[RMDB]
Source: RMDB library OK3TST, as collected in RNAgym. Chemical mapping of a 207-nucleotide RNA with DMS and 2A3. The 2A3 profile rests on 1,289 reads. The DMS profile rests on 2,793 reads. The RNA was probed in 150 mM KOAc, 10 mM MgCl2 and 150 mM bicine (pH 8.5) at 24 C.
RNA sequence: GGGAACGACUCGAGUAGAGUCGAAAAGAGGUGCCGAUGACCGCCGACAUCAAACAGUGGUCAUCCGAGCUUGGCGACCACGAGAGAGAUACGUUUAAGAAGGUAAUCGGGCUGCUCGCGUUUUUGGAUUCGGUGCAGACGGAUUACUCCGGCAAAGAAACAAUGCGAAUUUCGAUUCGCAUUGUUUAAAAGAAACAACAACAACAAC
Reactivity to DMS in 0.01 (KOAc 150mM, MgCl2 10mM, bicine 150mM(pH8.5), 24C), signal-to-noise 1, nucleotides 027 to 156: g000a060g040g060u000g010c030c040g020a070u000g000a100c020c030g000c030c000g000a140c100a180u010c130a200a120a120c050a030g030u010g010g020u020c010a050u000c020c010g020a110g000c070u000u000g020g000c020g000a040c010c030a030c020g000a200g000a130g010a120g010a130u020a100c030g000u000u020u000a070a080g010a090a040g020g020u000a030a030u000c050g020g020g020c010u020g010c000u000c010g000c070g010u000u000u000u000u000g020g000a070u000u010c030g020g030u000g000c020a070g000a050c010g000g000a120u010u000a030c060u000c000c000g020g020c080a080a110a150g020
Reactivity to 2A3 in 0.01 (KOAc 150mM, MgCl2 10mM, bicine 150mM(pH8.5), 24C), signal-to-noise 2, nucleotides 027 to 156: g110a000g060g080u110g020c060c030g000a000u030g010a000c000c000g010c000c000g090a110c080a120u240c060a110a140a040c040a020g000u000g010g010u030c030a000u000c020c040g040a040g000c040u100u060g050g040c000g000a020c000c030a020c050g010a020g000a000g000a000g010a040u090a230c090g010u080u050u060a100a110g030a050a040g010g000u000a020a030u030c040g010g110g030c000u000g000c010u010c040g200c060g040u010u020u000u090u200g240g010a110u070u060c030g020g050u050g000c010a010g030a070c000g080g000a000u030u020a000c010u010c020c010g060g000c040a130a000a060g060